[RMDB]
RNA sequence: GGGAACGACUCGAGUAGAGUCGAAAAGAUAUGGAUCCCGAGAGCGACGAUCAUAGGUCGGAAACGACUAUGGGAGCUCGGCGGAUCCUAAGUCAAAGCGGAGACAACGUUCGCGUUGUCUCCGCAACUUCUGCAUCCAGUUCGCUGGAUGCAGAAGAAAAGAAACAACAACAACAAC
Reactivity to 2A3 in 0.01 (KOAc 150mM, MgCl2 10mM, bicine 150mM(pH8.5), 24C), signal-to-noise 1, nucleotides 027 to 126: g010a000u000a000u030g000g000a010u020c000c000c000g070a130g000a010g140c030g300a300c030g010a040u000c000a030u040a080g220g200u150c000g010g010a000a020a000c000g020a010c000u010a010u010g010g000g010a010g000c000u030c000g000g040c260g030g010a010u000c000c000u000a000a000g010u000c030a010a260a000g000c000g050g030a030g030a040c030a020a010c000g070u130u180c300g020c040g130u000u010g010u000c000u050c000c070g010c010a000a020

This 177-nucleotide RNA was probed chemically with 2A3.
Values cover nucleotides 27 to 126.
2A3 adducts were read by reverse transcription with SuperScript II with manganese.
The reactions ran in a buffer of 150 mM KOAc, 10 mM MgCl2 and 150 mM bicine (pH 8.5), at 24 C.